[RMDB]
RNA sequence: GGGAACGACUCGAGUAGAGUCGAAAAGCAGGAAAUGGUCCAAGGUUCGUCGCCGGAAGAGCAACUAACACACAGACACCGGUAGCGCCUGCAUAUGGCGCAUAUGCGCGUCCUACUAAUGAAAACGGGGGACAGGGGGUUGCGAACGCAACCCCCACUCUUUACUAAGCUUCGGCUUAGUAAAGAGAAAAGAAACAACAACAACAAC
Reactivity to 2A3 in 0.01 (KOAc 150mM, MgCl2 10mM, bicine 150mM(pH8.5), 24C), signal-to-noise 1, nucleotides 027 to 156: g040c040a000g000g050a040a040a070u040g000g010u010c020c000a030a020g010g030u030u000c010g050u030c020g010c030c020g020g000a040a030g040a040g070c050a090a010c050u080a110a020c020a020c020a000c030a090g040a070c040a050c070c000g000g010u020a020g040c010g000c010c000u020g020c070a020u040a070u150g030g000c030g000c050a030u050a030u050g020c040g010c010g020u020c000c000u080a210c020u080a080a120u110g110a010a080a060a050c050g000g000g000g040g000a000c000a060g060g040g040g000g070u030u080g020c050g100a130a020c120g040c000a000a000c010c000c010c000c000a000
Source: RMDB library OK3TST, as collected in RNAgym. The record gives the reactivity of an RNA of 207 nucleotides to 2A3. The reactions ran in a buffer of 150 mM KOAc, 10 mM MgCl2 and 150 mM bicine (pH 8.5), at 24 C.